Conditions: 150 mM KOAc, 10 mM MgCl2 and 150 mM bicine (pH 8.5), 24 C. This 177-nucleotide RNA was probed chemically with 2A3 and DMS. Values cover nucleotides 27 to 126. For 2A3, 731 sequencing reads were counted.

[RMDB]
RNA sequence: GGGAACGACUCGAGUAGAGUCGAAAAGAGGCCAUUGCAUUAGCUUAUGCUGAAAUGUCCACAUCACAAAUGGCUUCAGUGGAUCAUGGUAUCGUGGCUCGAAGCAAACGUGUGAUCAUGGAUCGAGCGCACUCGGCUAUUUCGAUAGCCGAGUGCGAAAAGAAACAACAACAACAAC
Reactivity to 2A3 in 0.01 (KOAc 150mM, MgCl2 10mM, bicine 150mM(pH8.5), 24C), signal-to-noise 2, nucleotides 027 to 126: g100a010g000g000c000c000a000u020u200g000c010a010u030u030a050g000c000u210u120a060u270g000c000u020g070a030a030a030u020g030u050c010c010a010c010a040u080c030a000c000a080a000a030u110g030g000c000u000u000c000a060g030u120g110g000a080u040c010a050u070g300g000u190a020u020c030g030u050g140g000c000u000c120g000a010a000g000c020a030a010a030c060g100u050g030u050g110a010u090c000a080u000g080g030a000u040c100g000a000g040
Reactivity to DMS in 0.01 (KOAc 150mM, MgCl2 10mM, bicine 150mM(pH8.5), 24C), signal-to-noise 1, nucleotides 027 to 126: g000a000g000g000c000c000a110u050u010g000c180a050u000u000a150g000c030u010u090a130u000g000c010u020g000a120a140a070u030g050u020c000c000a000c300a120u000c000a000c130a100a050a020u000g000g000c000u000u000c000a100g050u000g000g000a070u000c040a020u000g070g000u020a230u000c000g030u000g010g040c020u000c050g030a060a210g000c040a000a300a100c200g000u040g000u040g000a090u070c080a090u040g000g000a090u050c160g000a090g000